[RMDB]
RNA sequence: GGGAACGACUCGAGUAGAGUCGAAAACUAUCUCCUAGUAAGGAAGCCCAGGCAGAUCAUAAAAAGUCACAUGGAGAAGAAUCAGGGGCCCUUCCCCUGACUGAGCUCUUAGUCGGCAGCUAAUUGCACUUCUCUGGCCGUAUGAGUGACUCAUCGACAUCCCGCAUUAUUUCGAUAAUGCGGGAUGAAAAGAAACAACAACAACAAC
Reactivity to DMS in 0.01 (KOAc 150mM, MgCl2 10mM, bicine 150mM(pH8.5), 24C), signal-to-noise 1, nucleotides 027 to 156: c040u010a090u000c060u000c010c050u010a160g010u010a100a100g000g010a150a160g000c080c000c040a050g030g040c060a180g010a040u050c010a100u010a040a100a120a090a060g020u000c040a110c040a120u010g030g020a040g000a010a050g030a080a160u010c030a030g000g010g030g050c190c080c120u000u010c010c000c020c010u030g010a000c010u000g000a140g000c010u000c050u000u000a030g010u000c060g030g000c060a210g010c010u000a020a050u010u000g000c040a300c050u000u000c010u000c010u000g010g000c100c070g010u020a060u000g010a150g000u070g010a060c010u000c060a070u010c000g020a250
Reactivity to 2A3 in 0.01 (KOAc 150mM, MgCl2 10mM, bicine 150mM(pH8.5), 24C), signal-to-noise 1, nucleotides 027 to 156: c020u120a110u100c080u040c050c020u060a100g040u140a130a060g040g040a040a000g000c010c020c010a020g020g020c000a030g060a110u100c010a080u190a190a160a030a020a010g070u020c010a010c010a070u160g040g000a000g010a010a020g020a030a070u000c010a000g000g020g000g020c150c040c070u070u150c000c000c000c010u000g000a010c020u030g020a000g060c000u000c000u000u030a050g030u150c130g030g010c030a010g000c020u000a020a050u040u000g000c000a020c050u100u000c010u000c040u010g150g020c030c010g080u080a100u180g040a050g040u000g020a020c000u000c020a050u110c030g060a000